An RNA of 177 nucleotides, treated with 2A3 and read out base by base. Values cover nucleotides 27 to 126. High 2A3 reactivity points to a flexible backbone, as in loops and unpaired stretches. The 2A3 profile rests on 405 reads.

[RMDB]
RNA sequence: GGGAACGACUCGAGUAGAGUCGAAAACAAAUCAUUACGGAGCACAUAAUUAUUUACCAUUGCCAAUUGUCAUUUCAGAAGCUGAAGGGGUAUGGGUUAAAGAUCCUGAAGGCAAUAAAUAUAUGGACGAUGAUCGUCGUUUCGACGACGAUCAUCGAAAAGAAACAACAACAACAAC
Reactivity to 2A3 in 0.01 (KOAc 150mM, MgCl2 10mM, bicine 150mM(pH8.5), 24C), signal-to-noise 1, nucleotides 027 to 126: c000a000a180a000u120c040a000u000u100a000c000g210g000a070g080c110a050c000a250u000a000a000u090u170a110u000u170u000a090c070c120a000u030u280g000c000c000a000a220u130u040g100u030c090a090u000u120u020c000a020g020a210a080g070c000u140g000a180a000g070g110g000g020u110a090u250g000g050g030u000u050a050a300a000g120a000u040c000c000u060g190a300a190g080g010c000a040a040u070a040a110a000u190a040u000a000u020g050g000a050